The record gives the reactivity of an RNA of 177 nucleotides to DMS and 2A3. The data come from the RNA Mapping Database (RMDB), library OK1LIB. Reactivities are given for positions 27 through 126. For DMS, 16,328 sequencing reads were counted. The reactions ran in a buffer of 150 mM KOAc, 10 mM MgCl2 and 150 mM bicine (pH 8.5), at 24 C.
RNA sequence: GGGAACGACUCGAGUAGAGUCGAAAACGAGCGGAAAGAGCAGGAGCCCCUUCAGAGCGAGACACUGGACAAUGAGGAGACUCUGGUCGGCGUCGUGGAGGAGCGCGGCGGGAAGGAGAACAUCCUCUCGCGCUAAUAUAUUCGUAUAUUAGCGCGAAAAAGAAACAACAACAACAAC
Reactivity to DMS in 0.01 (KOAc 150mM, MgCl2 10mM, bicine 150mM(pH8.5), 24C), signal-to-noise 6, nucleotides 027 to 126: c110g000a080g000c060g010g000a060a050a060g000a070g010c060a090g010g010a100g010c030c020c020c000u000u010c030a050g010a110g010c080g010a090g000a040c070a030c040u000g000g000a060c090a070a090u040g010a040g000g010a170g000a090c020u010c010u010g010g010u000c020g000g000c050g020u000c030g000u010g010g000a080g000g010a050g010c050g000c050g010g010c050g000g000g010a100a150g000g000a050g000a060a090c120a090u020c010c020u010c080
Reactivity to 2A3 in 0.01 (KOAc 150mM, MgCl2 10mM, bicine 150mM(pH8.5), 24C), signal-to-noise 9, nucleotides 027 to 126: c040g010a020g050c030g030g040a090a080a040g040a060g020c020a020g030g050a020g030c000c000c000c000u040u070c040a070g010a020g060c020g030a020g020a030c040a020c070u090g050g030a040c040a080a160u160g010a020g030g020a030g020a010c010u010c000u030g080g070u060c020g050g070c020g010u030c010g010u040g030g070a130g020g050a090g060c060g000c020g030g000c030g010g040g020a040a030g030g020a040g020a040a030c020a090u020c000c000u020c000